[RMDB]
The record gives the reactivity of an RNA of 207 nucleotides to 2A3. It was measured as part of the RMDB library M2RFPK.
RNA sequence: GGGAACGACUCGAGUAGAGUCGAAAAGAGAUGGCGAGAGCCAUCGGUAGUAUAGCGAAAAUCAUAAAUGAGAAGAGCUCUAAACGCCUAAGUAGAGUUAAAAUAAUGAGACAGGCACUACUACAAACACGGCCUCGAACGUUCGCGUUCGAGGCAACAACACGAACACCUUCGGGUGUUCGUGUUGAAAAGAAACAACAACAACAAC
Reactivity to 2A3 in 0.01 (KOAc 150mM, MgCl2 10mM, bicine 150mM(pH8.5), 24C), signal-to-noise 1, nucleotides 027 to 156: g090a000g000a000u000g000g000c030g000a120g000a030g030c000c000a000u000c000g000g010u030a000g000u000a030u040a040g060c020g180a100a050a050a000u090c110a010u070a200a300a060u190g010a020g030a140a070g030a000g000c000u000c000u050a100a120a070c060g070c020c000u040a160a080g030u020a010g020a000g050u050u100a040a000a010a120u300a060a120u120g050a000g000a010c060a010g090g000c000a000c010u030a040c000u040a030c000a000a300a000c060a020c190g200g030c030c000u000c000g010a000a000c000g000u090u090c180g000c060g120u000u000c000g000a000g000g000c000a000a000
Conditions: 150 mM KOAc, 10 mM MgCl2 and 150 mM bicine (pH 8.5), 24 C.